The data come from the RNA Mapping Database (RMDB), library ARCHII.
Structure probing data (DMS and 2A3) for a 207-nucleotide construct.
RNA sequence: GGGAACGACUCGAGUAGAGUCGAAAAGCCCAUGUGCUACGGUAAGGGUCUCACUCUAAGUGGGCUACACUAGUUAAUCUCCGUCUGGGGUUAAAUAGAAGAGCUUAAUCAGACUAGCUGAAUGGAAGCCUGUUACUGGGCCGAUGUUUAUGCGAAACAUAUUUGUAGCCUUCGGGCUACAAAUAUGAAAAGAAACAACAACAACAAC
Reactivity to DMS in 0.01 (KOAc 150mM, MgCl2 10mM, bicine 150mM(pH8.5), 24C), signal-to-noise 2, nucleotides 027 to 156: g020c000c000c020a130u030g020u000g010c030u000a070c040g010g020u000a060a090g010g020g010u010c030u000c020a110c020u010c020u000a060a110g020u000g010g010g020c010u020a100c070a180c010u010a070g020u000u000a050a040u000c000u030c010c170g000u010c080u000g000g020g040g030u000u000a010a020a040u000a060g000a130a090g000a120g000c050u000u000a100a060u010c030a040g010a060c060u000a130g000c040u000g040a030a040u010g000g000a150a030g010c030c000u010g010u000u000a130c220u000g000g020g040c000c000g010a300u000g000u000u000u000a010u020g000c010g020a210a090a110
Reactivity to 2A3 in 0.01 (KOAc 150mM, MgCl2 10mM, bicine 150mM(pH8.5), 24C), signal-to-noise 5, nucleotides 027 to 156: g020c010c040c010a030u160g060u070g030c010u020a050c060g030g070u110a070a090g130g010g040u040c050u050c030a040c000u090c030u050a120a100g010u030g010g010g000c010u060a020c020a000c020u000a000g000u000u010a010a010u010c020u020c030c030g050u020c020u070g000g000g000g000u010u010a020a020a010u060a030g130a160a020g010a070g020c060u130u220a030a020u140c000a000g010a020c010u020a010g010c010u010g000a000a010u030g000g040a010a000g000c010c010u070g100u230u200a180c230u210g000g000g000c000c000g010a010u030g020u000u010u010a140u250g000c010g000a020a020a000